Chemical mapping of a 177-nucleotide RNA with 2A3 and DMS. The data come from the RNA Mapping Database (RMDB), libraries RFM100 and RFMREP. The RNA was probed in 150 mM KOAc, 10 mM MgCl2 and 150 mM bicine (pH 8.5) at 24 C. For DMS the reverse transcriptase was MarathonRT. As a SHAPE reagent, 2A3 marks flexible, mostly unpaired nucleotides at the ribose 2'-OH.
[RMDB]
RNA sequence: GGGAACGACUCGAGUAGAGUCGAAAAUUGGGGAGUAGCCGCUCUUCGUUUCGAAGGGGCUUACGUCAACAUACUUGACCGGCAGGUCAUGGCGUAAGCGGUUCUAAGCCUGGCAAGACCUUUGACCACUAGAGAAAUAGUUCGCUAUUUCUCUAGUAAAAGAAACAACAACAACAAC
Reactivity to 2A3 in 0.01 (KOAc 150mM, MgCl2 10mM, bicine 150mM(pH8.5), 24C), signal-to-noise 9, nucleotides 027 to 126: u060u030g010g000g000g000a030g020u020a000g000c000c000g000c000u000c000u000u000c010g100u080u130u300c150g000a000a000g010g000g000g000c000u000u000a000c000g000u000c000a010a020c010a060u200a060c030u020u020g000a000c000c000g090g150c180a110g020g000u000c000a010u010g000g000c000g000u000a000a000g000c000g000g000u070u020c080u160a120a040g010c000c000u000g000g000c000a010a010g020a020c000c000u000u010u060g040a020c000c000
Reactivity to DMS in 0.01 (KOAc 150mM, MgCl2 10mM, bicine 150mM(pH8.5), 24C), signal-to-noise 9, nucleotides 027 to 126: u020u010g010g000g000g000a060g010u000a260g000c010c010g010c000u000c000u000u000c010g010u010u020u030c090g010a020a010g000g010g010g020c000u000u000a000c010g010u000c000a040a300c220a130u020a100c290u020u000g000a010c000c010g000g020c300a100g010g000u000c010a050u000g000g000c000g000u000a010a010g010c000g000g000u000u010c180u020a110a110g000c010c000u000g010g010c010a050a200g000a070c010c000u000u010u010g010a200c030c030